[RMDB]
RNA sequence: GGGAACGACUCGAGUAGAGUCGAAAAGAGGUGUGUGUGUGGCAGCGCGUGUCUCCAGGCGCAUGUUGGAAGAACUAAUGUUGCACUUUUACCCCCUUCAGGCACAAGGUAGUUUGGUAGAAUUGGCACGACGAUUGUAGUUCGCUACAAUCGUCGUAAAAGAAACAACAACAACAAC
Reactivity to DMS in 0.01 (KOAc 150mM, MgCl2 10mM, bicine 150mM(pH8.5), 24C), signal-to-noise 2, nucleotides 027 to 126: g010a090g020g000u000g020u000g020u010g020u000g020u000g000g010c090a050g030c080g020c060g020u010g010u000c060u000c050c060a160g000g000c080g010c040a050u010g030u010u020g010g010a100a130g000a110a040c100u010a090a060u000g000u000u000g020c040a100c100u000u000u010u000a220c060c000c000c010c060u020u000c100a040g010g000c020a030c080a030a050g000g000u000a030g000u000u010u000g000g000u000a020g020a050a120u000u000g000g030c120